Structure probing data (DMS) for a 207-nucleotide construct. The reactions ran in a buffer of 150 mM KOAc, 10 mM MgCl2 and 150 mM bicine (pH 8.5), at 24 C. Values cover nucleotides 27 to 156.
[RMDB]
RNA sequence: GGGAACGACUCGAGUAGAGUCGAAAACCGUAGGAGGCUACUUUCGCUUGGAUUUAUGGGAAUUAUAUAUUCGAAAGAGUAUAGAAUUCCCAUUGUCAGCGAAAUUAGCCUCCUAAACGGAAAACGUGUGUGAGGUGUUCGCACCUCACACACGUAACAGAUAAUCAAUGUUCGCAUUGAUUAUCUGAAAAGAAACAACAACAACAAC
Reactivity to DMS in 0.01 (KOAc 150mM, MgCl2 10mM, bicine 150mM(pH8.5), 24C), signal-to-noise 1, nucleotides 027 to 156: c020c000g030u000a020g000g000a010g010g000c020u000a000c120u000u000u000c000g010c020u000u020g010g040a030u000u010u010a010u000g010g000g010a030a000u010u000a040u000a000u000a010u000u010c000g020a170a140a300g000a040g030u000a050u000a010g000a020a030u000u000c000c000c000a000u000u000g010u020c010a070g010c000g010a020a000a000u000u000a000g000c000c000u000c010c020u000a000a020a060c030g010g000a090a040a120a070c030g010u000g040u000g020u020g020a020g030g060u000g040u000u000c300g020c020a040c000c000u000c000a030c000a000c000a020c010g010u000a030a140